[RMDB]
RNA sequence: GGGAACGACUCGAGUAGAGUCGAAAAGAGUAUACUAAGGCGUAGAGCUAAAAGUUGUUAAGGAACUCGGCAAAUUAUCCUGCCUUGUGCUUUGGGAAAGUACAUAGAUGGGUCAAACUAUCAAACUCCGGGGACACCCUAAAGCUUAUGAUACCAAUCAUAUAUGUACGUUCGCGUACAUAUAUGAAAAAGAAACAACAACAACAAC
Reactivity to 2A3 in 0.01 (KOAc 150mM, MgCl2 10mM, bicine 150mM(pH8.5), 24C), signal-to-noise 4, nucleotides 027 to 156: g050a010g040u110a070u010a170c050u090a090a070g020g000c030g060u100a050g030a040g130c030u060a050a080a020a060g010u030u030g030u070u080a060a040g030g010a040a030c020u000c040g030g000c020a040a090a080u150u060a080u210c010c030u010g010c010c000u020u020g010u020g010c000u040u030u040g050g040g010a060a060a030g020u010a010c010a030u150a030g030a040u050g010g000g020u050c050a030a120a070c070u090a040u190c040a100a050a030c040u020c050c010g000g000g000g040a030c020a080c020c010c000u050a070a060a010g000c000u070u100a050u140g040a020u030a080c020c020a030a050
Reactivity to DMS in 0.01 (KOAc 150mM, MgCl2 10mM, bicine 150mM(pH8.5), 24C), signal-to-noise 3, nucleotides 027 to 156: g000a130g010u010a130u010a110c100u020a070a160g000g010c010g020u000a150g010a160g000c010u010a060a070a050a180g010u000u010g010u010u000a100a090g020g020a100a050c010u000c080g030g020c160a050a080a100u000u000a050u010c040c030u000g020c040c030u010u020g040u000g000c010u000u000u000g000g020g040a170a060a060g010u010a010c060a050u000a060g000a060u000g020g020g000u010c090a060a030a140c080u010a060u000c060a050a050a110c060u010c040c000g030g000g030g010a180c110a090c050c000c040u010a030a020a070g000c030u010u000a060u000g020a150u000a090c030c030a030a300

Source information: Structure probing data (2A3 and DMS) for a 207-nucleotide construct. For DMS, 4,548 sequencing reads were counted. High 2A3 reactivity points to a flexible backbone, as in loops and unpaired stretches.